[RMDB]
RNA sequence: GGGAACGACUCGAGUAGAGUCGAAAAAGUGAAGGUUUUAACAUCGAUUGGAGGUGAGGAUCGGAAUUCAAAGGAAGUUUUUUAUACUGGUUACCAUGAAACAGAGAACCUAUACUCAGAGAUUGUCCACUAAAGCGAUAUUCGUAUCGCUUUAGUGAAAAGAAACAACAACAACAAC
Reactivity to 2A3 in 0.01 (KOAc 150mM, MgCl2 10mM, bicine 150mM(pH8.5), 24C), signal-to-noise 6, nucleotides 027 to 126: a000g170u170g030a070a060g090g050u050u050u070u130a120a060c060a070u090c070g110a100u050u170g080g020a070g050g020u100g040a030g020g040a030u060c030g020g020a070a070u080u060c060a100a030a070g030g010a010a030g040u030u060u000u000u090u020a150u070a060c040u050g060g040u020u060a060c000c010a020u130g080a030a030a030c080a020g090a000g020a130a010c000c000u020a030u060a100c050u040c030a030g020a010g010a150u050u100g040u040c010
Reactivity to DMS in 0.01 (KOAc 150mM, MgCl2 10mM, bicine 150mM(pH8.5), 24C), signal-to-noise 6, nucleotides 027 to 126: a080g020u010g000a100a090g010g010u000u010u000u000a070a080c130a080u020c090g010a120u050u010g000g010a060g010g020u000g010a100g000g010a040u000c080g000g000a090a050u010u010c070a050a090a110g010g010a110a090g020u000u000u020u020u000u020a040u030a130c040u010g000g010u000u030a080c050c020a060u000g000a100a030a070c150a080g000a130g000a050a050c030c020u020a090u010a060c030u000c080a080g010a120g000a120u020u010g010u010c110
The record gives the reactivity of an RNA of 177 nucleotides to 2A3 and DMS. It was measured as part of the RMDB library OK1LIB. The reactions ran in a buffer of 150 mM KOAc, 10 mM MgCl2 and 150 mM bicine (pH 8.5), at 24 C. For DMS the reverse transcriptase was MarathonRT. Values cover nucleotides 27 to 126.